Annotation
This 207-nucleotide RNA was probed chemically with 2A3. Values are in units of 0.01, from 0 to 300, in steps of 10. For 2A3 the reverse transcriptase was SuperScript II with manganese.
[RMDB]
RNA sequence: GGGAACGACUCGAGUAGAGUCGAAAAUCUAGCGGGCAGCAAGAAGCACAGCACCGCCAGUUACCACGCAGACAUCCUGGGGAACUGAGGUGCCAGGGAUUGAACUUGGAUCACCAGGCUUGGAGGCAAGCACCUUUGACAUACUAAGCCACUGCCACCCAUUUUAUCCGUUCGCGGAUAAAAUGGGAAAAGAAACAACAACAACAAC
Reactivity to 2A3 in 0.01 (KOAc 150mM, MgCl2 10mM, bicine 150mM(pH8.5), 24C), signal-to-noise 2, nucleotides 027 to 156: u030c020u010a010g000c010g010g020g050c050a000g020c000a050a080g050a110a000g110c080a020c020a010g010c000a030c020c000g100c110c000a000g000u010u070a290c000c000a100c060g280c030a000g100a100c020a090u230c020c060u010g000g010g000g010a010a020c010u030g000a010g000g010u000g000c000c000a010g010g000g060a060u090u160g050a170a100c050u030u010g040g020a060u110c030a030c120c040a020g040g020c000u050u050g100g010a010g010g030c010a040a050g080c010a110c030c000u070u050u130g040a040c020a050u170a070c030u080a010a090g030c010c010a040c060u020g000c000c000a010